The data come from the RNA Mapping Database (RMDB), libraries RFM100 and RFMREP. This 177-nucleotide RNA was probed chemically with DMS and 2A3.

RNA sequence: GGGAACGACUCGAGUAGAGUCGAAAAUCGAUUGUGACUGCAAAGUCACUUUUGCGCAGGGGAGGUCAUUAAGGCGGGAAGCCGACUUUGAUAAUCUGUGUGAACCAUUUUAUCACAAUCUUAUUUAACUCAGAGGUAAGUUCGCUUACCUCUGAGUAAAAGAAACAACAACAACAAC
Reactivity to DMS in 0.01 (KOAc 150mM, MgCl2 10mM, bicine 150mM(pH8.5), 24C), signal-to-noise 3, nucleotides 027 to 126: u040c090g000a030u000u010g020u010g000a030c050u000g020c270a040a100a020g020u000c010a010c010u000u000u000u020g020c140g030c050a090g020g000g010g000a090g010g010u000c050a030u010u030a060a110g020g000c030g010g010g010a090a120g010c040c000g000a080c120u020u020u020g000a040u000a050a060u000c020u010g000u010g000u010g010a070a150c150c060a100u000u010u010u010a070u020c050a030c200a040a070u020c060u010u020a110u000u020u010a060
Reactivity to 2A3 in 0.01 (KOAc 150mM, MgCl2 10mM, bicine 150mM(pH8.5), 24C), signal-to-noise 3, nucleotides 027 to 126: u120c030g000a000u020u050g010u010g020a010c010u020g020c120a130a060a010g000u020c000a000c000u030u020u010u010g020c030g000c010a040g020g000g020g020a080g090g000u030c010a010u040u070a030a020g010g000c010g030g080g080a090a010g040c020c010g000a060c020u110u020u020g020a030u010a100a010u000c010u010g010u000g020u040g120a030a040c000c000a060u060u120u060u090a120u120c050a060c060a140a060u020c030u030u120a180u100u150u060a110
The RNA was probed in 150 mM KOAc, 10 mM MgCl2 and 150 mM bicine (pH 8.5) at 24 C. DMS adducts were read by reverse transcription with MarathonRT.